Chemical mapping of a 207-nucleotide RNA with DMS and 2A3. For 2A3 the reverse transcriptase was SuperScript II with manganese. For DMS the reverse transcriptase was MarathonRT. It was measured as part of the RMDB library M2RFPK.

[RMDB]
RNA sequence: GGGAACGACUCGAGUAGAGUCGAAAAAGUGAGUAUGGCUCGUUACGACGACCCAUACUCACAACGGUUUUCCUAAAUCGUCGUGAGACGGACCUUGGAAAACCUAGUAUUUAAAUAACUAGGUCAAAUUAGCCUAGAUCCUUCGGGAUCUAGGCAAUCGUGUAGAGAUGUUCGCAUCUCUACACGAAAAAGAAACAACAACAACAAC
Reactivity to DMS in 0.01 (KOAc 150mM, MgCl2 10mM, bicine 150mM(pH8.5), 24C), signal-to-noise 2, nucleotides 027 to 156: a180g060u010g010a060g040u000a000u000g010g040c050u000c000g050u020u000a100c240g000a060c020g000a020c020c000c020a020u000a010c000u010c000a000c000a020a050c120g000g010u000u010u000u000c040c030u000a050a050a050u000c000g010u000c030g010u010g010a300g010a020c010g000g020a050c040c020u010u000g000g010a040a080a010a030c000c000u010a040g010u000a090u000u000u020a100a190a220u000a090a110c030u000a030g010g000u000c060a040a080a180u010u010a100g000c000c000u000a010g000a000u000c000c000u010u000c300g030g030g010a030u000c000u000a000g010g010c000a010a000
Reactivity to 2A3 in 0.01 (KOAc 150mM, MgCl2 10mM, bicine 150mM(pH8.5), 24C), signal-to-noise 4, nucleotides 027 to 156: a000g000u000g000a000g000u010a000u010g000g000c020u010c020g010u020u050a090c290g020a000c000g000a000c090c000c000a000u000a000c000u000c000a000c000a000a000c010g000g000u000u000u000u000c010c000u010a000a010a010u050c000g000u000c000g030u030g110a100g000a020c010g000g000a010c000c010u020u020g010g010a010a010a010a000c000c000u000a010g020u010a050u050u110u090a120a200a110u120a070a030c100u080a010g000g000u010c020a010a120a180u150u210a040g000c000c000u000a000g000a000u000c010c010u030u100c190g090g000g000a000u000c000u000a000g000g000c000a000a000